The data come from the RNA Mapping Database (RMDB), library TTRDES. Chemical mapping of a 177-nucleotide RNA with 2A3 and DMS. The reactions ran in a buffer of 150 mM KOAc, 10 mM MgCl2 and 150 mM bicine (pH 8.5), at 24 C. The 2A3 profile rests on 30,421 reads. For DMS, 15,312 sequencing reads were counted. For 2A3 the reverse transcriptase was SuperScript II with manganese.
[RMDB]
RNA sequence: GGGAACGACUCGAGUAGAGUCGAAAAGAUAUGGACUCCUGGGAGAUCAACAGCAACGUCGGAAACGACGUUGACAUGAUCUACCCAGGGAGUCCUAAGUCAAAAGGUUCCACUUCGGUGGAACCAACUUCCCAAUUAAGUUCGCUUAAUUGGGAAGAAAAGAAACAACAACAACAAC
Reactivity to 2A3 in 0.01 (KOAc 150mM, MgCl2 10mM, bicine 150mM(pH8.5), 24C), signal-to-noise 7, nucleotides 027 to 126: g010a020u080a070u190g010g000a000c000u000c000c000u000g000g020g000a010g010a010u010c010a010a170c040a120g070c000a010a010c000g000u000c010g020g040a120a050a090c010g000a010c010g000u000u020g030a010c010a040u040g010a000u000c000u190a300c000c010c000a020g020g010g000a000g000u000c000c000u000a060a020g070u010c050a000a000a060a260g000g000u010u010c000c010a010c010u040u090c300g160g000u000g000g000a000a000c000c000a000a000
Reactivity to DMS in 0.01 (KOAc 150mM, MgCl2 10mM, bicine 150mM(pH8.5), 24C), signal-to-noise 8, nucleotides 027 to 126: g010a060u000a300u010g000g000a010c000u000c000c000u000g010g000g010a070g000a010u010c000a020a110c300a240g000c010a000a000c000g000u010c000g010g010a150a110a260c000g010a010c000g010u000u000g000a030c090a160u000g000a010u000c010u000a140c000c000c000a010g010g020g010a010g000u000c000c000u000a010a090g000u000c050a070a110a140a150g010g010u000u000c010c000a010c000u000u010c200g010g010u000g000g000a000a000c010c010a020a040